[RMDB]
RNA sequence: GGGAACGACUCGAGUAGAGUCGAAAAGACCGCUGAAUGCGGAAGUACUAGAUCAACUAGAAAGUAGAUUAAUACAAAAGCUACGUCUCGAAACUAGUUGAUCUAGUCCAAUCGAGACGUAGGAAGAGAGGAGUGAUACGUUCGCGUAUCACUCCUCAAAAGAAACAACAACAACAAC
Reactivity to DMS in 0.01 (KOAc 150mM, MgCl2 10mM, bicine 150mM(pH8.5), 24C), signal-to-noise 1, nucleotides 027 to 126: g000a020c000c000g020c020u010g010a030a060u050g020c060g030g000a110a020g000u020a150c000u000a000g000a000u000c000a010a080c000u000a000g040a260a050a130g000u000a190g020a230u110u020a030a020u000a050c100a110a120a110a100g020c000u000a000c010g010u000c000u000c000g010a100a160a070c000u010a040g010u000u020g020a020u000c000u000a000g000u000c020c000a120a050u000c000g000a010g000a010c000g000u000a010g010g000a160a020g020a300
Reactivity to 2A3 in 0.01 (KOAc 150mM, MgCl2 10mM, bicine 150mM(pH8.5), 24C), signal-to-noise 3, nucleotides 027 to 126: g100a050c010c000g000c040u060g210a260a100u300g000c000g030g020a000a000g040u000a060c010u000a000g000a000u010c000a010a010c010u000a030g090a100a140a000g070u150a020g060a300u230u080a240a110u220a130c090a050a100a000a000g110c000u000a010c000g000u010c000u000c000g040a040a040a090c020u000a000g000u030u010g000a000u000c000u000a000g000u010c000c010a000a010u050c000g000a000g000a000c000g000u000a000g010g060a120a000g110a030